[RMDB]
RNA sequence: GGGAACGACUCGAGUAGAGUCGAAAAUCUACGAAUCAUUAUGAGUAACACUGCAAGAGAGGGACAUAGAGCUGGUGCUCUCCUCAGUCUUUUAUCACUACCUUCUGCAGCUAUGAGUAAUCACAUCCCACAACGACACGUUCGCGUGUCGUUGUGGAAAAGAAACAACAACAACAAC
Reactivity to 2A3 in 0.01 (KOAc 150mM, MgCl2 10mM, bicine 150mM(pH8.5), 24C), signal-to-noise 2, nucleotides 027 to 126: u020c050u130a080c000g080a070a030u130c000a060u090u200a050u050g040a020g020u000a000a020c110a000c080u020g030c020a150a040g090a040g000a000g030g050g000a050c070a210u090a010g050a010g040c000u070g030g040u090g080c010u070c040u090c030c000u050c000a000g040u040c000u010u070u060u090a010u050c050a030c030u070a020c020c000u000u050c010u030g000c000a030g020c000u020a030u050g020a010g010u090a000a100u010c040a080c010a240u050c000